[RMDB]
RNA sequence: GGGAACGACUCGAGUAGAGUCGAAAAGUGUGGAGUUUGCACAAACUCCCCAUGUCUGUGUGGGUUUUCUCCAGGUACUCAGGUGAGCAAGAACCUAUCAACAACAUUAAGUGAGGACUUAACUGUACUAAUAUCUGUGUGACUUUAGUCAAGAAAACAUAAGAAGUUGUUUCGACAACUUCUUAUGAAAAGAAACAACAACAACAAC
Reactivity to DMS in 0.01 (KOAc 150mM, MgCl2 10mM, bicine 150mM(pH8.5), 24C), signal-to-noise 4, nucleotides 027 to 156: g030u000g030u000g000g000a050g020u010u000u000g030c210a110c130a050a040a050c010u000c000c000c000c010a050u000g000u010c050u000g010u000g020u010g010g020g010u000u010u000u000c020u010c040c020a100g010g020u000a040c050u000c060a100g030g020u020g010a080g020c020a090a110g010a140a100c030c010u000a110u010c070a070a130c060a080a090c090a240u000u000a050a060g000u000g000a200g010g000a100c030u000u010a020a060c070u000g000u000a070c040u000a060a060u000a040u000c030u000g030u000g020u010g010a030c040u010u000u000a070g010u010c050a060a100g000a100a070a070a170
Reactivity to 2A3 in 0.01 (KOAc 150mM, MgCl2 10mM, bicine 150mM(pH8.5), 24C), signal-to-noise 8, nucleotides 027 to 156: g040u040g020u060g010g010a030g020u040u080u170g120c100a060c030a070a020a020c010u010c000c000c010c000a020u050g030u060c080u050g090u020g000u050g030g030g000u020u030u060u030c040u000c030c020a060g040g070u050a090c050u050c100a010g040g060u110g090a020g020c050a070a040g010a050a040c020c020u080a080u180c060a030a080c020a030a020c010a060u080u090a110a000g030u030g090a080g020g070a020c000u040u050a050a030c050u070g080u120a030c010u060a040a110u060a050u160c050u050g080u020g040u050g100a030c030u080u100u070a040g020u040c020a020a030g060a060a090a010a020